Description:
Structure probing data (DMS) for a 177-nucleotide construct.
RNA sequence: GGGAACGACUCGAGUAGAGUCGAAAAGGAGUGCUACCGAAAGGUAGCACUCCAACAAAUCGGUGUAAGUCGAGCCUGUCUUACACCGUGCGGCACAGCGGAAACGCUGAUGUCGUAUACAGGGCUACCCGGUAAUACUGUUCGCAGUAUUACCGGGAAAAGAAACAACAACAACAAC
Reactivity to DMS in 0.01 (KOAc 150mM, MgCl2 10mM, bicine 150mM(pH8.5), 24C), signal-to-noise 1, nucleotides 027 to 126: g010g040a000g040u000g020c000u010a000c010c000g000a140a120a160g030g020u020a010g010c000a020c000u000c000c000a000a030c100a090a060a040u010c000g000g030u000g000u010a000a010g020u010c050g000a060g000c030c010u020g000u010c000u000u000a030c000a030c020c000g030u020g000c000g000g000c020a010c000a000g000c010g020g000a140a100a160c000g040c000u000g000a070u000g040u000c000g030u000a030u010a100c130a080g000g010g020c010u000a250
Description:
The RNA was probed in 150 mM KOAc, 10 mM MgCl2 and 150 mM bicine (pH 8.5) at 24 C. DMS adducts were read by reverse transcription with MarathonRT. The data come from the RNA Mapping Database (RMDB), library OK2TRN.